Conditions: 150 mM KOAc, 10 mM MgCl2 and 150 mM bicine (pH 8.5), 24 C.
Chemical mapping of a 177-nucleotide RNA with DMS and 2A3.
For 2A3 the reverse transcriptase was SuperScript II with manganese.
The 2A3 profile rests on 3,181 reads.
It was measured as part of the RMDB library VIROID.
[RMDB]
RNA sequence: GGGAACGACUCGAGUAGAGUCGAAAACUCGAUGAUGCACAACUCCAGGGCCAGCGUCAAAAGUACCGCCCUGUGUCUUGUCUCCUCGUGGUGUCGAAGCAAUGGCGGAGUCCUAGGCACCACAGCUCAACCUUACUACGUUCGCGUAGUAAGGUUGAAAAGAAACAACAACAACAAC
Reactivity to DMS in 0.01 (KOAc 150mM, MgCl2 10mM, bicine 150mM(pH8.5), 24C), signal-to-noise 1, nucleotides 027 to 126: c000u010c000g070a100u000g030a050u010g000c120a000c080a070a030c030u060c030c010a000g060g010g010c000c100a220g100c040g030u000c100a070a110a060a130g050u010a060c140c090g000c030c000c030u000g010u010g000u000c050u000u000g010u000c030u000c000c150u000c060g010u000g030g000u000g030u000c010g000a170a130g000c050a130a080u000g000g010c060g030g000a120g000u010c000c010u000a080g000g000c010a040c010c010a000c040a030g000c200u020
Reactivity to 2A3 in 0.01 (KOAc 150mM, MgCl2 10mM, bicine 150mM(pH8.5), 24C), signal-to-noise 2, nucleotides 027 to 126: c020u010c040g010a050u080g000a000u070g050c090a010c020a050a040c010u000c000c020a020g020g000g000c040c090a040g040c050g080u050c000a190a180a090a000g070u060a040c000c020g010c000c000c000u030g050u050g010u000c000u010u030g020u010c020u020c040c000u110c090g000u010g000g000u010g020u020c010g060a020a000g030c050a020a100u300g050g000c190g220g140a070g020u020c000c010u000a000g010g000c000a000c000c000a000c010a000g010c010u010